[RMDB]
RNA sequence: GGGAACGACUCGAGUAGAGUCGAAAAAAGGAAAAUCCAUGGACCGACCCCAUCAUCUCCACCCCGUAGGAACUACGAGAUCACCCCAAGGACGCCUUCGGCAUCCAGGGGUCACGGACCGACCAUAGAGACAAUACGCAUUCGUGCGUAUUGUCUCAAAAGAAACAACAACAACAAC
Reactivity to DMS in 0.01 (KOAc 150mM, MgCl2 10mM, bicine 150mM(pH8.5), 24C), signal-to-noise 1, nucleotides 027 to 126: a060a010g130g000a140a110a070a000u000c000c000a150u000g030g030a010c000c020g000a040c080c080c000c000a010u030c050a270u000c000u040c000c130a070c150c060c040c000g000u000a120g000g000a300a140c020u000a090c090g000a020g000a130u000c130a090c000c000c000c000a010a210g030g000a020c040g070c000c010u040u020c110g000g030c000a090u000c000c030a000g060g000g000g060u030c040a000c050g000g000a000c110c040g040a130c060c080a110u010a130
Reactivity to 2A3 in 0.01 (KOAc 150mM, MgCl2 10mM, bicine 150mM(pH8.5), 24C), signal-to-noise 1, nucleotides 027 to 126: a000a010g110g030a130a040a000a050u070c060c040a110u060g030g000a050c030c030g050a110c000c000c000c000a040u090c040a040u010c010u000c000c020a080c000c010c000c050g090u060a030g040g080a070a070c000u080a040c060g070a020g000a180u030c040a120c000c010c000c000a010a090g000g000a000c020g000c000c000u140u260c110g080g000c000a020u000c000c000a000g000g000g000g000u000c000a000c010g040g000a030c000c010g020a020c000c050a070u070a230